An RNA of 177 nucleotides, treated with DMS and 2A3 and read out base by base. For 2A3, 1,561 sequencing reads were counted.
[RMDB]
RNA sequence: GGGAACGACUCGAGUAGAGUCGAAAAAAAAAGAUAUGGACGUCAGUGCUUGGAUUUAGACAACGAAUUACGAUCGGAAACGAUCGUAACUAUUGUCUUGUCAGCACGGACGUCCUAAGUCAAAAAAGUCAAUUAAGUACUUCGGUACUUAAUUGACAAAAGAAACAACAACAACAAC
Reactivity to DMS in 0.01 (KOAc 150mM, MgCl2 10mM, bicine 150mM(pH8.5), 24C), signal-to-noise 1, nucleotides 027 to 126: a080a040a100a090a090g000a020u020a300u000g000g000a000c000g020u000c010a040g010u000g000c010u020u010g040g030a010u010u000u000a010g030a000c000a010a000c130g000a060a060u000u010a000c000g000a000u010c000g020g000a100a120a190c000g000a000u000c000g000u000a000a010c060u000a170u000u010g000u000c000u000u000g000u020c000a030g000c000a000c020g000g010a010c000g000u000c000c000u000a010a040g010u000c040a000a020a110a060a100a070
Reactivity to 2A3 in 0.01 (KOAc 150mM, MgCl2 10mM, bicine 150mM(pH8.5), 24C), signal-to-noise 1, nucleotides 027 to 126: a040a070a040a000a000g070a050u100a050u140g000g010a000c000g000u000c030a030g020u000g040c030u180u300g200g050a140u300u300u000a020g000a000c000a030a010c040g120a150a230u030u000a010c010g000a000u030c000g000g000a040a150a020c030g000a010u000c000g000u000a000a000c000u050a020u020u000g000u000c020u010u010g030u000c010a000g010c020a000c030g010g000a000c000g000u030c000c000u020a020a000g010u000c000a030a100a050a050a000a000